Chemical mapping of a 207-nucleotide RNA with 2A3. For 2A3, 790 sequencing reads were counted. Reactivities are given for positions 27 through 156. Values are in units of 0.01, from 0 to 300, in steps of 10.

RNA sequence: GGGAACGACUCGAGUAGAGUCGAAAACUGGAACAGUGUUUCUAACAUUUAAUGUACAUAUGAAUCACAUGGGGAUUCUUAUUAGAGGAUGAUCUGGGAUUUUGCCUUUCUACAACAUCCCAGUGAUGCUUGAUGUUCCUAGAUCUUGAAGCACACACCGACUCCUAUAGUUCGCUAUAGGAGUCGGAAAAGAAACAACAACAACAAC
Reactivity to 2A3 in 0.01 (KOAc 150mM, MgCl2 10mM, bicine 150mM(pH8.5), 24C), signal-to-noise 2, nucleotides 027 to 156: c010u030g100g060a010a050c060a140g010u010g000u000u040u060c040u100a090a030c030a070u120u220u210a230a100u130g090u120a060c010a050u130a080u170g030a050a000u060c010a020c100a290u200g110g000g030g030a000u080u000c000u000u110a060u040u140a040g050a060g070g040a050u000g020a030u030c000u000g020g000g000a000u040u020u040u040g010c030c010u120u240u090c080u190a020c000a000a000c000a010u010c010c020c000a000g000u000g010a010u040g030c010u030u050g100a110u060g050u010u000c030c000u030a090g020a130u070c030u070u110g030a030a010g050c020a000c020a000c000a000